[RMDB]
RNA sequence: GGGAACGACUCGAGUAGAGUCGAAAAGCUCUGUGCCUGCCACAAAGCCUCUUAAUUAGGAAUGCAGUUCAUUGAAUAACUGUAUCAAAGUUAGCUGGAAUACCUUGACAUGAAGAUUCCUUCCACUUACUGAGCAGUUUGUGCCCACUAGUGGCCAUCGCUUAGAUAGAUUCGUCUAUCUAAGCGAAAAAGAAACAACAACAACAAC
Reactivity to 2A3 in 0.01 (KOAc 150mM, MgCl2 10mM, bicine 150mM(pH8.5), 24C), signal-to-noise 7, nucleotides 027 to 156: g020c020u010c020u040g030u030g020c020c030u040g030c050c000a040c000a020a100a030g030c050c000u070c030u100u170a300a280u110u120a080g070g070a090a060u100g000c000a000g010u070u080c050a080u150u220g130a140a070u170a050a000c000u010g030u040a200u070c030a050a100a030g020u030u030a020g020c100u030g000g020a030a020u100a160c000c000u060u080g090a090c050a130u170g060a080a010g010a090u060u090c000c010u000u030c020c030a030c010u010u080a040c030u030g010a000g010c010a020g000u080u140u130g060u120g010c000c010c000a160c130u080a030g030u130g160g000c010c010a040
Reactivity to DMS in 0.01 (KOAc 150mM, MgCl2 10mM, bicine 150mM(pH8.5), 24C), signal-to-noise 3, nucleotides 027 to 156: g000c010u000c020u000g040u000g000c000c040u020g080c030c010a070c050a030a070a090g010c010c020u000c040u000u010a070a140u010u000a140g010g020a150a050u000g000c010a030g020u000u010c080a280u000u000g020a220a160u000a040a050c020u000g010u000a030u000c050a110a110a110g020u000u000a050g010c010u000g020g000a140a080u000a080c000c020u000u010g020a090c080a100u010g030a110a080g020a170u000u000c000c010u000u000c010c010a040c030u010u000a050c020u010g000a220g030c010a040g000u000u010u000g030u010g010c000c020c010a070c030u000a050g000u010g010g010c100c040a050